[RMDB]
RNA sequence: GGGAACGACUCGAGUAGAGUCGAAAAGGGGUCACGCGUUUGACGCUCUCGACAUGACGGUAUGCUGAAGCCUCCACGGCAUAUCCGUCAACAGCGAGAGCCGAGCGUGACGGAGGCACCCAAAAGCAGAGUCCCAAGUUCGCUUGGGACUCUGCAAGUGACCAUAGCGAUUCGUCGCUAUGGUCACAAAAGAAACAACAACAACAAC
Reactivity to 2A3 in 0.01 (KOAc 150mM, MgCl2 10mM, bicine 150mM(pH8.5), 24C), signal-to-noise 1, nucleotides 027 to 156: g100g000g060g010u020c000a010c000g010c030g050u060u270u150g000a010c030g000c010u000c010u010c020g180a150c170a200u300g000a000c000g000g000u010a000u000g000c000u050g010a140a010g020c000c020u000c000c000a020c000g000g020c000a000u000a010u080c070c000g020u000c000a040a030c060a020g020c000g000a000g010a000g000c010c000g020a010g000c010g000u000g000a000c000g000g000a010g010g000c010a010c000c020c000a050a130a000a020g040c020a000g010a000g010u000c000c000c030a000a000g040u010u110c160g050c280u010u010g000g000g010a000c010u000c000u000g000c000a010a000